[RMDB]
RNA sequence: GGGAACGACUCGAGUAGAGUCGAAAAGAUCGUCAAGGAAUCCAUCUCAAUUGCUCAGAAAAGACGAAAGUACCAUUCUAUGUGCAUGGAAUACCAGACAAGCUCUAUGAGACAUUGUGGGAUACAGUGACAUUACCCAUUUCGAUGGGUAAUGUCAAAAAGAAACAACAACAACAAC
Reactivity to DMS in 0.01 (KOAc 150mM, MgCl2 10mM, bicine 150mM(pH8.5), 24C), signal-to-noise 4, nucleotides 027 to 126: g000a090u010c090g020u000c070a090a090g020g000a100a060u000c010c000a080u010c060u020c030a040a030u000u000g060c020u010c040a030g000a110a100a050a040g000a300c030g030a140a140a140g000u030a070c040c050a010u000u010c010u020a090u020g040u040g010c080a020u020g000g020a060a030u000a040c020c000a070g010a130c150a080a160g030c050u000c030u010a160u000g000a010g020a060c070a060u000u000g000u000g000g000g000a020u020a050c100a050g020
Reactivity to 2A3 in 0.01 (KOAc 150mM, MgCl2 10mM, bicine 150mM(pH8.5), 24C), signal-to-noise 4, nucleotides 027 to 126: g080a040u130c070g040u070c150a050a070g110g000a130a060u010c030c000a080u050c040u000c050a070a120u110u110g000c010u020c010a030g070a100a080a050a040g050a040c050g050a090a080a030g030u050a060c010c020a030u050u030c030u090a170u220g130u110g050c070a010u010g020g000a150a100u030a130c000c010a040g050a170c050a120a030g020c010u000c000u020a050u050g040a010g010a040c000a020u010u040g040u050g040g020g000a020u060a100c040a030g080
Structure probing data (DMS and 2A3) for a 177-nucleotide construct.
High 2A3 reactivity points to a flexible backbone, as in loops and unpaired stretches.
The DMS profile rests on 4,714 reads.
It was measured as part of the RMDB library OK1LIB.
For 2A3, 3,469 sequencing reads were counted.
The reactions ran in a buffer of 150 mM KOAc, 10 mM MgCl2 and 150 mM bicine (pH 8.5), at 24 C.
For 2A3 the reverse transcriptase was SuperScript II with manganese.